RNA sequence: GGGAACGACUCGAGUAGAGUCGAAAACGUUACGAAUAGGAUCGCGAGUCUCUUUUUCACGCAGUCCCGAGGUCAUACCGCCGCCUUGAAUCAUAAAGCCGUCAAUCACACGGUGAAAGAGAGUGUACUCAUUAGCAGGUUUCGACCUGCUAAUGAGAAAAGAAACAACAACAACAAC
Reactivity to DMS in 0.01 (KOAc 150mM, MgCl2 10mM, bicine 150mM(pH8.5), 24C), signal-to-noise 2, nucleotides 027 to 126: c060g000u020u000a010c130g000a080a110u010a090g000g010a060u000c030g040c070g000a120g020u010c050u000c010u000u000u000u000u000c040a020c070g000c080a040g000u000c000c020c040g010a110g000g000u000c060a060u000a090c050c050g030c030c080g000c030c010u000u020g010a060a060u000c050a100u000a080a100a180g020c010c020g030u000c040a040a010u010c200a100c190a050c030g020g000u010g000a030a020a070g000a030g000a050g000u010g020u000a140
Reactivity to 2A3 in 0.01 (KOAc 150mM, MgCl2 10mM, bicine 150mM(pH8.5), 24C), signal-to-noise 2, nucleotides 027 to 126: c050g070u100u060a030c050g030a080a150u080a170g010g070a100u040c030g030c090g080a090g070u010c030u030c000u110u030u010u060u040c050a030c030g030c020a020g020u020c040c010c000g000a030g040g020u000c020a040u030a130c060c000g050c000c000g040c020c000u020u120g080a070a050u030c010a070u100a080a070a010g030c000c000g030u000c080a040a060u130c000a040c000a010c140g000g020u020g020a020a040a000g080a010g000a020g010u070g040u030a070